[RMDB]
Chemical mapping of a 177-nucleotide RNA with DMS and 2A3. 2A3 adducts were read by reverse transcription with SuperScript II with manganese. Conditions: 150 mM KOAc, 10 mM MgCl2 and 150 mM bicine (pH 8.5), 24 C. The DMS profile rests on 973 reads.
RNA sequence: GGGAACGACUCGAGUAGAGUCGAAAAGUAUGUGCAGCUGAUGACAGCAUCGCUGCUGAGACUCGAUGAUGGCUCAGCCUUAAAGUAAACGCUCUGAUGCACAUCACAAAACUCUCCUUCGGGAGAGCAAGCAAUACGACUUCGGUCGUAUUGCUUGAAAAGAAACAACAACAACAAC
Reactivity to DMS in 0.01 (KOAc 150mM, MgCl2 10mM, bicine 150mM(pH8.5), 24C), signal-to-noise 2, nucleotides 027 to 126: g010u000a010u000g000u000g010c000a120g040c050u000g010a060u020g000a140c180a050g000c030a040u000c100g000c110u020g010c020u000g030a140g000a130c050u010c080g010a120u000g020a040u010g000g000c020u000c000a040g000c010c260u000u020a030a070a030g010u000a070a060a160c240g010c080u000c010u010g000a120u000g010c010a030c000a010u000c060a100c100a070a070a050a140c010u010c000u000c000c000u010u020c210g030g010g000a000g000a010g010
Reactivity to 2A3 in 0.01 (KOAc 150mM, MgCl2 10mM, bicine 150mM(pH8.5), 24C), signal-to-noise 1, nucleotides 027 to 126: g040u040a010u040g030u000g000c000a020g000c010u050g000a110u090g040a120c000a050g030c020a020u060c030g020c070u010g020c000u000g000a050g010a040c000u020c050g150a230u190g040a070u070g030g010c000u010c000a000g020c030c040u170u160a120a140a000g060u090a070a190a080c060g000c020u030c030u080g020a010u030g030c000a020c000a040u030c000a000c030a000a060a020a030c020u010c000u000c010c000u020u020c150g070g020g000a000g010a000g000